[RMDB]
RNA sequence: GGGAACGACUCGAGUAGAGUCGAAAAAAGCCUAAUGGCCAUAGUAGGAGGGGUAAUCUAUCUGGGGAAGUUGGUGGUUCUUCUUCCUCCUUGCCCUCAGGUGCACAGACUGGGGAGUGGAUAGAUACGAGGUUUGUCGUUUCGACGACAAACCUCGAAAAGAAACAACAACAACAAC
Reactivity to 2A3 in 0.01 (KOAc 150mM, MgCl2 10mM, bicine 150mM(pH8.5), 24C), signal-to-noise 1, nucleotides 027 to 126: a010a000g060c030c000u070a180a110u130g200g000c000c000a000u020a030g050u000a000g010g080a070g000g000g000g000u070a090a000u020c000u060a000u010c040u070g000g000g000g000a000a000g000u000u000g040g130u010g000g000u000u120c000u030u000c010u020u030c000c000u030c040c000u020u110g070c000c000c010u130c010a020g000g000u110g050c110a090c030a080g110a000c050u000g000g000g010g000a060g000u000g000g030a040u000a060g000a000u060a140
Source information: Structure probing data (2A3) for a 177-nucleotide construct. The reactions ran in a buffer of 150 mM KOAc, 10 mM MgCl2 and 150 mM bicine (pH 8.5), at 24 C.